[RMDB]
RNA sequence: GGGAACGACUCGAGUAGAGUCGAAAAGCUGGCCAGUCGUACUUCGGGAACGACCAAUUCGCUGAAUUCGCACCCGGUAUGAAGUCAAUUGAUGACGCGCUGGAGUUGCGUGGGAGGAUUUUGAGCAGAGGUAUUUUAUGUUCGCAUAAAAUACCUCAAAAGAAACAACAACAACAAC
Reactivity to 2A3 in 0.01 (KOAc 150mM, MgCl2 10mM, bicine 150mM(pH8.5), 24C), signal-to-noise 3, nucleotides 027 to 126: g020c040u060g100g000c050c010a030g000u000c000g020u020a030c010u030u110c060g020g020g070a080a070c030g020a020c020c050a010a100u070u030c080g010c130u060g020a080a080u080u050c020g010c020a020c000c000c000g000g010u090a160u160g120a160a040g000u000c020a030a120u170u260g110a150u130g020a100c010g000c010g000c020u020g010g030a140g060u170u060g010c000g030u050g010g020g010a050g000g010a040u120u070u110u220g000a020g040c080a030
Reactivity to DMS in 0.01 (KOAc 150mM, MgCl2 10mM, bicine 150mM(pH8.5), 24C), signal-to-noise 5, nucleotides 027 to 126: g010c030u000g010g010c020c040a130g020u000c030g020u000a090c060u000u010c130g010g010g010a110a050c040g010a080c080c150a050a060u000u000c080g010c090u000g000a100a180u000u000c040g010c040a120c020c020c000g020g020u000a080u020g020a080a130g000u000c010a070a150u010u000g010a140u000g010a070c010g000c070g020c020u010g000g000a080g000u010u000g000c030g020u000g000g000g010a090g010g000a060u000u000u000u000g010a090g010c160a160

The record gives the reactivity of an RNA of 177 nucleotides to 2A3 and DMS. For DMS the reverse transcriptase was MarathonRT. Conditions: 150 mM KOAc, 10 mM MgCl2 and 150 mM bicine (pH 8.5), 24 C. For DMS, 4,886 sequencing reads were counted. The 2A3 profile rests on 2,641 reads.